RNA sequence: GGGAACGACUCGAGUAGAGUCGAAAAUGACAGAGUGGUAUCAGAGCAGACUUGCUUUACAUCAAUGCCCAGCAGUUCACUCGAUGAUGCACAACUCCAGGGCCAGCGUCAAAAGUACCGCCCUGUGGUUGUAUCGUCUGUUCGCAGACGAUACAACAAAAGAAACAACAACAACAAC
Reactivity to 2A3 in 0.01 (KOAc 150mM, MgCl2 10mM, bicine 150mM(pH8.5), 24C), signal-to-noise 1, nucleotides 027 to 126: u130g030a000c070a120g090a000g030u070g040g050u060a000u100c030a030g010a010g050c020a000g030a120c040u050u160g040c020u070u100u070a070c040a060u150c070a050a180u110g040c050c000c000a000g000c000a010g040u120u050c020a020c060u000c020g000a000u090g030a020u030g030c040a020c000a120a100c020u000c000c020a000g030g000g000c100c060a060g040c020g030u000c000a270a040a040a080g010u050a010c010c010g000c000c030c010u000g010u050g040
Reactivity to DMS in 0.01 (KOAc 150mM, MgCl2 10mM, bicine 150mM(pH8.5), 24C), signal-to-noise 2, nucleotides 027 to 126: u000g010a060c050a110g010a070g020u000g020g000u000a070u000c090a040g020a070g000c060a080g000a030c030u000u010g030c040u000u000u030a120c060a080u000c150a040a070u010g000c060c020c120a090g010c050a020g020u020u020c050a100c050u000c030g000a080u000g000a120u000g020c070a140c050a030a020c030u000c080c030a080g050g000g010c010c150a130g000c070g020u020c150a060a060a150a150g030u000a020c050c080g010c010c000c000u010g000u010g010